[RMDB]
This 177-nucleotide RNA was probed chemically with DMS and 2A3. For DMS the reverse transcriptase was MarathonRT. The RNA was probed in 150 mM KOAc, 10 mM MgCl2 and 150 mM bicine (pH 8.5) at 24 C. For 2A3, 4,219 sequencing reads were counted.
RNA sequence: GGGAACGACUCGAGUAGAGUCGAAAAGACGAUUAGGAAAUCCUGCAGAAUUCGAUGGCCCACCUAAUCGUAACCUGAGGAAACAGGAAUAAAAACAAUCUGCCAUCCAAAAAGCGCAGGAAAGAAAGGCCUAUAUAUGAUUCGUCAUAUAUAGGCCAAAAGAAACAACAACAACAAC
Reactivity to DMS in 0.01 (KOAc 150mM, MgCl2 10mM, bicine 150mM(pH8.5), 24C), signal-to-noise 3, nucleotides 027 to 126: g000a010c050g000a000u000u000a000g010g020a110a080a120u020c000c010u000g030c010a090g020a070a070u020u020c140g000a010u000g000g010c000c210c100a180c020c000u000a000a000u000c010g000u010a090a140c000c030u000g010a120g010g010a090a070a080c030a020g000g000a200a060u000a080a030a050a120a070c120a090a130u040c080u030g010c010c010a020u000c020c260a060a070a070a090a120g000c120g000c000a000g010g010a020a140a080g000a110a130a080
Reactivity to 2A3 in 0.01 (KOAc 150mM, MgCl2 10mM, bicine 150mM(pH8.5), 24C), signal-to-noise 5, nucleotides 027 to 126: g110a000c000g000a000u010u000a010g020g000a100a150a070u030c010c000u000g000c030a080g090a150a170u170u160c060g000a030u010g000g000c000c040c000a050c000c000u000a000a010u000c010g000u020a030a080c000c000u020g030a070g060g130a140a110a030c010a000g010g130a110a080u200a100a050a010a010a000c040a010a060u040c040u090g000c000c000a010u010c040c040a010a030a010a130a050g030c040g000c010a000g030g080a010a010a000g140a040a090a010